RNA sequence: GGGAACGACUCGAGUAGAGUCGAAAAGUGUACACGUACGAGUACGUGAUCUCACGUGAACGAUCGAGAACACGAGUACGAUCGAACGUGAACACACGUACGUUCGAGAGAGUGUGUUCACACGUGAACACGAACGAACGUGUGUUCGUACGAGUUCAGCUGGUAUGAGAUUCGUCUCAUACCAGCUAAAAGAAACAACAACAACAAC
Reactivity to DMS in 0.01 (KOAc 150mM, MgCl2 10mM, bicine 150mM(pH8.5), 24C), signal-to-noise 3, nucleotides 027 to 156: g010u020g030u000a210c050a070c080g030u000a060c030g020a190g020u010a030c030g020u000g000a070u000c040u010c020a040c140g030u000g000a080a150c050g000a020u000c040g020a260g000a070a100c050a070c070g010a170g000u010a100c010g020a040u000c010g020a090a030c040g020u020g020a020a060c000a020c030a000c010g000u000a070c030g000u000u000c010g010a140g030a250g020a170g030u000g010u000g010u020u000c030a110c070a060c060g000u000g000a090a130c030a170c000g000a060a080c040g010a120a030c030g010u020g040u000g020u010u000c000g020u000a020c030g000a140g010u000u000c030
Reactivity to 2A3 in 0.01 (KOAc 150mM, MgCl2 10mM, bicine 150mM(pH8.5), 24C), signal-to-noise 7, nucleotides 027 to 156: g130u110g030u060a030c070a000c030g010u020a000c010g020a020g050u070a030c160g050u110g090a180u060c020u000c040a010c000g010u020g090a100a060c010g000a020u030c020g020a010g100a250a070c100a060c220g080a100g090u100a060c020g000a010u010c010g030a110a020c020g010u010g010a040a000c010a000c000a000c000g000u030a010c010g020u010u010c040g000a040g010a020g000a030g140u110g010u020g010u120u030c020a020c020a020c110g150u040g020a020a010c000a000c040g000a020a010c000g000a010a000c000g010u010g000u010g010u020u000c010g000u000a010c020g010a020g030u040u090c030